RNA sequence: GGGAACGACUCGAGUAGAGUCGAAAAAAAGAGGACAACACAUUGCAAUAGUCGGGCCAGGAGGUGAGGAAUGCCUGGAUAACUCUGGGCCAGAUCUCUAUCUUGAUUGUAGAGACGGUUUCCUGACUCAUCAAAAUAGCUUCGGCUAUUUUGAUGAAAAAGAAACAACAACAACAAC
Reactivity to 2A3 in 0.01 (KOAc 150mM, MgCl2 10mM, bicine 150mM(pH8.5), 24C), signal-to-noise 8, nucleotides 027 to 126: a000a010a000g080a020g020g020a040c050a130a020c030a040c020a130u070u200g040c030a040a120u050a100g030u050c030g000g010g020c030c010a010g020g020a020g000g060u090g040a060g010g090a120a040u080g010c020c000u010g000g020a040u100a070a040c050u000c010u030g010g000g000c010c010a050g050a160u010c010u000c010u020a070u060c030u060u210g150a220u130u160g030u030a010g000a000g000a020c030g020g000u010u030u030c010c000u010g020a030c020
Reactivity to DMS in 0.01 (KOAc 150mM, MgCl2 10mM, bicine 150mM(pH8.5), 24C), signal-to-noise 7, nucleotides 027 to 126: a050a040a050g000a060g000g000a060c070a050a080c110a090c110a070u010u020g010c140a080a060u010a060g010u010c040g000g000g000c040c050a060g010g000a080g000g000u020g000a040g020g010a060a080u030g020c010c000u000g010g000a050u010a070a140c240u010c010u000g000g000g010c020c120a070g010a110u010c000u000c010u000a010u040c050u000u010g010a140u020u020g020u000a010g000a030g010a050c170g000g000u010u000u000c010c020u000g010a220c090
Structure probing data (2A3 and DMS) for a 177-nucleotide construct. DMS adducts were read by reverse transcription with MarathonRT. Values are in units of 0.01, from 0 to 300, in steps of 10.